[RMDB]
RNA sequence: GGGAACGACUCGAGUAGAGUCGAAAAAAUUAAUGAGAUUGUCGAGGCUAUGAGUGAAGGAGACCACUACAUCAAUCUUACAGAAGUCCAUGAUCAGGAAAGUCUAUUCGCUACCAUAGGAAUAUGUGCUAAAAUCGCUGAACAUUGGGGAUACAAACCAUCUAAGGCAGUUCGCUGCCUUAGAUGGAAAAGAAACAACAACAACAAC
Reactivity to 2A3 in 0.01 (KOAc 150mM, MgCl2 10mM, bicine 150mM(pH8.5), 24C), signal-to-noise 1, nucleotides 027 to 156: a010a000u230u180a050a090u090g040a050g050a050u040u050g030u040c050g030a010g050g000c010u030a040u100g010a000g040u030g030a060a000g020g010a030g020a000c000c010a000c000u090a060c000a020u090c000a040a110u000c040u010u070a050c040a080g080a080a000g060u050c050c020a010u000g000a060u050c000a000g000g000a120a040a000g000u000c020u060a070u040u020c030g030c080u070a090c060c040a080u110a040g050g010a000a000u100a030u160g060u050g000c000u020a060a060a000a000u030c040g000c170u050g050a050a000c020a050u020u050g010g000g000g010a000u030a110c020a000a060a020